[RMDB]
RNA sequence: GGGAACGACUCGAGUAGAGUCGAAAAAUCUACCUUACUCGAAAACCCGCAUAUGAAGACCACUAAAUGACGAAUCCUAAUAACCCAAUGGGUUUCAUUGCGGAUAUGAGGCAUUUGUCUGAGCGGAAAACGCGUCUUAUUUCGAUAAGACGCGUUUAAAAGAAACAACAACAACAAC
Reactivity to DMS in 0.01 (KOAc 150mM, MgCl2 10mM, bicine 150mM(pH8.5), 24C), signal-to-noise 3, nucleotides 027 to 126: a100u010c030u000a040c010c030u000u010a000c020u000c000g020a020a070a140a070c070c010c020g000c180a120u060a060u060g000a130a090g010a150c000c030a040c060u020a060a080a060u020g010a010c010g000a010a020u000c020c010u010a060a010u000a020a050c000c000c000a020a000u000g000g010g010u000u030u070c000a010u000u010g000c110g000g000a120u000a010u000g000a020g010g020c170a080u010u000u000g010u000c030u000g010a060g010c040g000g010a110
Reactivity to 2A3 in 0.01 (KOAc 150mM, MgCl2 10mM, bicine 150mM(pH8.5), 24C), signal-to-noise 3, nucleotides 027 to 126: a010u010c000u030a050c000c010u020u040a030c000u000c010g030a060a020a030a050c020c020c000g010c090a110u120a050u170g180a160a080g050a070c000c030a040c090u060a090a150a130u180g000a000c010g030a000a000u010c000c020u040a070a000u040a070a060c020c010c000a010a000u030g040g040g100u090u140u300c010a010u020u030g050c100g010g010a010u000a010u020g000a010g010g000c030a040u020u000u000g010u010c020u010g030a010g000c050g000g000a010